About this RNA: The record gives the reactivity of an RNA of 177 nucleotides to DMS and 2A3. 2A3 adducts were read by reverse transcription with SuperScript II with manganese. The RNA was probed in 150 mM KOAc, 10 mM MgCl2 and 150 mM bicine (pH 8.5) at 24 C. The 2A3 profile rests on 1,223 reads.
RNA sequence: GGGAACGACUCGAGUAGAGUCGAAAAAAGGAGAAAAAGGCAGGGAAAGACAGAAACACUCACGCCCAGUGCUGCGACGGUACAUGAAACACGUACGCCUGAGCGUCUUGGAGUGAGCAGACGCGAGGAUCGUCACGAGGUUCGCCUCGUGACGAUCAAAAGAAACAACAACAACAAC
Reactivity to DMS in 0.01 (KOAc 150mM, MgCl2 10mM, bicine 150mM(pH8.5), 24C), signal-to-noise 2, nucleotides 027 to 126: a040a120g030g000a120g020a080a110a070a090a000g010g000c000a040g000g020g020a040a010a020g000a000c130a070g010a050a030a110c100a100c000u000c030a050c010g010c000c000c000a050g020u030g030c010u000g010c050g000a090c050g000g040u000a040c170a060u040g000a110a060a080c090a120c000g010u010a040c040g000c010c040u020g000a130g000c000g020u000c120u030u040g000g000a090g000u090g000a070g000c030a000g000a100c050g010c060g000a070g000
Reactivity to 2A3 in 0.01 (KOAc 150mM, MgCl2 10mM, bicine 150mM(pH8.5), 24C), signal-to-noise 2, nucleotides 027 to 126: a000a020g100g010a040g060a050a000a040a000a010g040g000c030a030g040g000g020a010a070a020g020a030c030a040g130a010a040a020c010a060c010u060c000a030c000g010c000c000c050a060g070u080g080c100u130g010c030g070a060c070g000g020u050a020c000a060u190g160a080a090a000c190a010c030g000u080a000c050g010c000c000u060g020a020g040c000g000u040c030u010u160g040g000a090g000u070g010a010g010c000a000g010a000c040g000c000g020a030g110